This 177-nucleotide RNA was probed chemically with DMS and 2A3. The data come from the RNA Mapping Database (RMDB), library OK1LIB. Conditions: 150 mM KOAc, 10 mM MgCl2 and 150 mM bicine (pH 8.5), 24 C. For 2A3, 617 sequencing reads were counted. Values cover nucleotides 27 to 126. For DMS the reverse transcriptase was MarathonRT.
[RMDB]
RNA sequence: GGGAACGACUCGAGUAGAGUCGAAAAAGCAAAGGUUUCAAGCUAUCGUUGAUUCGCUUUUCGACAAUCAACAAGUCAGUAUCAUUGUUCUUGACGUUGGAUGAUACAGUAAUACCUUCAGGUGUACAGUCCAAAAUACCUUCGGGUAUUUUGGACUAAAAGAAACAACAACAACAAC
Reactivity to DMS in 0.01 (KOAc 150mM, MgCl2 10mM, bicine 150mM(pH8.5), 24C), signal-to-noise 2, nucleotides 027 to 126: a070g090c010a110a120a100g020g010u000u000u020c070a080a040g000c150u000a020u060c100g020u000u000g000a000u000u000c130g020c180u000u010u000u070c090g000a170c030a130a110u000c040a010a010c200a070a070g000u000c000a060g010u000a000u010c020a000u010u000g000u000u000c020u000u000g010a140c140g000u000u000g000g010a000u000g000a000u000a020c030a010g000u000a080a070u020a080c000c000u010u040c210a070g000g000u020g000u040a110c100
Reactivity to 2A3 in 0.01 (KOAc 150mM, MgCl2 10mM, bicine 150mM(pH8.5), 24C), signal-to-noise 2, nucleotides 027 to 126: a010g070c050a060a060a040g130g010u010u040u030c050a020a040g000c000u150a170u290c110g020u000u010g000a010u040u080c050g000c030u040u000u040u010c000g000a000c070a010a130u030c000a000a040c040a010a000g000u010c010a010g030u000a000u000c010a010u000u020g140u280u040c060u160u240g060a140c150g000u090u070g070g080a030u000g020a000u000a000c020a000g050u210a040a120u060a110c020c000u190u090c150a090g000g020u030g110u050a170c080